[RMDB]
RNA sequence: GGGAACGACUCGAGUAGAGUCGAAAAUACAUAAAUAUUAUACUAGCAUUUACCAUCUCACUUCUAGGAAUACUAGUAUAUCGCUCACACCUCAUAUCCUCCCUACUAUGCCUAGAAGGAAUAAUACCAUUAGUACCUGAUUCGUCAGGUACUAAUGAAAAGAAACAACAACAACAAC
Reactivity to DMS in 0.01 (KOAc 150mM, MgCl2 10mM, bicine 150mM(pH8.5), 24C), signal-to-noise 4, nucleotides 027 to 126: u040a050c040a070u030a060a060a120u060a080u020u010a020u000a030c010u000a010g010c080a030u000u000u020a120c080c040a050u010c130u020c130a090c030u000u010c000u000a030g000g000a060a040u000a020c020u000a000g010u000a010u000a020u020c110g030c040u000c040a030c040a050c040c000u030c040a080u010a090u020c060c030u000c000c010c000u000a030c090u020a020u020g000c000c000u020a010g000a020a030g000g010a110a060u020a080a070u010a110c240
Reactivity to 2A3 in 0.01 (KOAc 150mM, MgCl2 10mM, bicine 150mM(pH8.5), 24C), signal-to-noise 9, nucleotides 027 to 126: u150a020c050a030u250a080a150a030u300a120u170u080a020u030a020c000u000a000g020c030a040u040u090u120a130c030c020a100u080c070u080c100a080c020u060u000c010u040a010g020g020a070a050u030a100c020u010a000g010u010a010u010a010u040c020g010c030u030c010a050c000a020c010c010u050c020a030u030a040u140c020c010u030c000c020c000u040a080c060u060a070u140g040c000c010u000a010g010a020a010g050g080a020a010u220a060a040u110a060c030

The data come from the RNA Mapping Database (RMDB), library OK1LIB. Chemical mapping of a 177-nucleotide RNA with DMS and 2A3. In probing experiments dimethyl sulfate is read out at A N1 and C N3, which are open when not base-paired. For 2A3 the reverse transcriptase was SuperScript II with manganese. As a SHAPE reagent, 2A3 marks flexible, mostly unpaired nucleotides at the ribose 2'-OH. The reactions ran in a buffer of 150 mM KOAc, 10 mM MgCl2 and 150 mM bicine (pH 8.5), at 24 C. For DMS, 9,159 sequencing reads were counted.